This 207-nucleotide RNA was probed chemically with DMS.

RNA sequence: GGGAACGACUCGAGUAGAGUCGAAAAUGGGCCGUGUGCUUAACCGGGACAAGAUCUCCUUCUCUCCAACGUUGUUGCCAACUCAUGAUUCUCCUAACCUGUGCUUGGAGAGACGUGGACCCAGAGUAAAACGAAGGGUGCUUCGGCACCCUUCGAAUCUUACGUCAUUCUUCGGAAUGACGUAAGAAAAAGAAACAACAACAACAAC
Reactivity to DMS in 0.01 (KOAc 150mM, MgCl2 10mM, bicine 150mM(pH8.5), 24C), signal-to-noise 1, nucleotides 027 to 156: u000g000g000g010c000c010g060u000g040u000g050c160u010u000a120a080c100c050g000g010g040a230c060a090a100g010a300u000c000u000c040c040u010u010c050u000c010u020c000c010a020a160c110g020u000u000g010u000u000g030c060c020a060a110c030u020c050a080u010g000a060u000u010c000u000c000c020u000a030a050c050c050u000g000u010g020c060u000u000g020g000a100g000a020g010a020c210g020u010g050g030a130c030c020c010a280g000a210g000u030a030a070a060a130c020g020a030a000g010g010g010u010g000c010u000u010c250g040g000c040a020c000c020c000u000u000c000g000a000a040